[RMDB]
RNA sequence: GGGAACGACUCGAGUAGAGUCGAAAAGAUAUGGAGCUGUCAACUCGCGAGGUUCUCGGAAACGAGAACUCCCCACCGAACUACGAGGACAGCUCCUAAGUCAAAGGUCCUUGUUCGCAAGGACCAAGGUUAUUAAACUCUUCGGAGUUUAAUAACCAAAAGAAACAACAACAACAAC
Reactivity to DMS in 0.01 (KOAc 150mM, MgCl2 10mM, bicine 150mM(pH8.5), 24C), signal-to-noise 3, nucleotides 027 to 126: g000a010u000a070u010g000g000a010g020c010u000g010u000c020a080a180c000u000c000g010c160g000a030g000g000u000u000c000u000c000g020g000a030a020a040c010g000a010g010a000a030c010u000c030c020c140c180a090c190c130g000a080a070c150u000a300c010g010a020g000g010a010c000a010g020c000u000c000c000u000a000a050g000u000c020a070a120a120g000g000u000c000c000u010u000g000u000u010c170g010c010a010a010g000g010a010c000c010a000a010
Reactivity to 2A3 in 0.01 (KOAc 150mM, MgCl2 10mM, bicine 150mM(pH8.5), 24C), signal-to-noise 3, nucleotides 027 to 126: g000a000u010a010u070g000g000a000g000c010u000g000u000c050a220a300c290u010c020g300c110g070a050g030g020u010u010c000u000c000g000g010a020a000a000c000g010a010g010a020a000c020u170c040c030c000c020a190c030c120g110a240a150c150u180a080c300g010a000g000g020a010c010a000g000c000u010c000c000u010a000a000g000u000c010a140a030a090g010g000u000c000c000u010u000g040u030u090c270g010c100a010a010g000g010a000c010c000a000a020